[RMDB]
RNA sequence: GGGAACGACUCGAGUAGAGUCGAAAAGAUAUGGAACAAGGGAGAUGUACAAGGACUUGGACCCCCUAAGCUCGGAAACGAGCUUAGGGGCUAGUCCGGGGUACAUCGAAGAACUUGUUCCUAAGUCCGAAAUAGGGAUGUUCGCAUCCCUAUUUCGAAAAGAAACAACAACAACAAC
Reactivity to DMS in 0.01 (KOAc 150mM, MgCl2 10mM, bicine 150mM(pH8.5), 24C), signal-to-noise 2, nucleotides 027 to 126: g000a100u000a300u000g010g000a000a000c010a020a020g000g000g000a070g000a010u000g030u010a010c000a300a150g000g000a010c010u000u000g040g000a220c300c000c020c000c020u000a000a020g000c010u000c010g000g000a100a090a280c030g000a010g020c000u000u010a000g010g000g000g030c000u000a020g010u000c010c000g000g010g000g030u000a000c000a000u000c010g040a120a150g000a050a160c010u000u000g000u000u000c000c000u000a030a050g000u010c030